[RMDB]
RNA sequence: GGGAACGACUCGAGUAGAGUCGAAAAGCUUAAAACUCAAAGGACUUGGCGGUGCUUUAUAUCCUUCUAGAGGAGCCUGUUCUAUAAUCGAUAAACCCCGAUAAACCUCACCAAUUCUUGCUAAUACAGUCUAUAUACCGCCAUCUUCAGCAAACCCGUCCUAUGUAUAGUUCGCUAUACAUAGGACAAAAGAAACAACAACAACAAC
Reactivity to DMS in 0.01 (KOAc 150mM, MgCl2 10mM, bicine 150mM(pH8.5), 24C), signal-to-noise 2, nucleotides 027 to 156: g010c030u000u000a100a070a130a100c020u010c040a070a120a140g000g020a050c010u010u000g000g050c040g020g000u000g000c030u000u020u000a050u000a110u040c020c000u000u010c060u010a110g000a110g030g000a070g010c070c010u000g000u000u000c010u000a070u000a090a060u010c050g000a160u000a050a050a070c050c020c010c020g030a090u010a060a050a080c020c020u000c020a060c030c020a030a150u000u020c020u000u000g000c020u000a050a080u000a050c020a070g010u000c040u000a070u000a140u000a050c040c000g010c020c020a010u010c000u000u010c020a100g000c050a070a020a120c000c030c050
Reactivity to 2A3 in 0.01 (KOAc 150mM, MgCl2 10mM, bicine 150mM(pH8.5), 24C), signal-to-noise 4, nucleotides 027 to 156: g010c010u060u050a030a020a050a120c040u060c110a090a100a070g040g020a040c030u040u040g010g000c030g000g010u020g010c000u100u120u060a130u060a030u110c010c030u050u050c060u090a080g030a030g080g020a010g020c000c020u020g020u050u030c030u040a050u090a120a050u070c010g020a010u080a060a170a110c030c040c040c000g000a020u090a080a140a040c020c030u030c040a060c010c040a030a040u090u080c030u080u130g040c030u040a070a060u100a160c030a020g020u000c020u020a070u000a010u030a180c010c000g000c010c000a000u010c010u040u050c020a010g000c000a110a050a080c000c000c000